RNA sequence: GGGAACGACUCGAGUAGAGUCGAAAACAAGUACGAACCGCGUUUCCAAUACUUCGAGCCGCGCGAGCAGGGCAUCUACACCUUCACUCAGUACGUCAAGCAACGCCCGACUUGGUACAGCGGUGCCGACCAUAACUCGGUUCGCCGAGUUAUGGUCAAAAGAAACAACAACAACAAC
Reactivity to 2A3 in 0.01 (KOAc 150mM, MgCl2 10mM, bicine 150mM(pH8.5), 24C), signal-to-noise 2, nucleotides 027 to 126: c030a080a000g130u150a070c070g030a100a000c000c030g000c010g000u020u080u060c030c020a030a000u100a190c030u030u070c030g020a030g000c010c000g000c010g010c030g000a000g010c030a040g000g000g000c050a090u010c040u080a040c060a070c030c010u100u110c080a060c060u040c020a020g030u070a070c070g070u020c070a000a150g030c010a040a030c070g000c040c000c020g010a030c010u000u020g020g030u070a040c000a050g010c000g030g000u020g020c020c030
Reactivity to DMS in 0.01 (KOAc 150mM, MgCl2 10mM, bicine 150mM(pH8.5), 24C), signal-to-noise 2, nucleotides 027 to 126: c060a110a120g010u000a150c090g000a090a060c050c040g010c040g000u000u000u010c010c050a160a080u000a080c170u000u000c030g000a160g000c000c010g010c230g010c070g010a040g040c140a080g010g020g000c050a040u020c060u000a080c120a110c060c080u020u030c080a070c040u000c000a160g040u000a030c060g010u030c110a060a070g000c040a040a170c150g010c020c020c000g000a100c120u000u000g020g010u000a020c110a130g000c050g000g010u030g000c160c120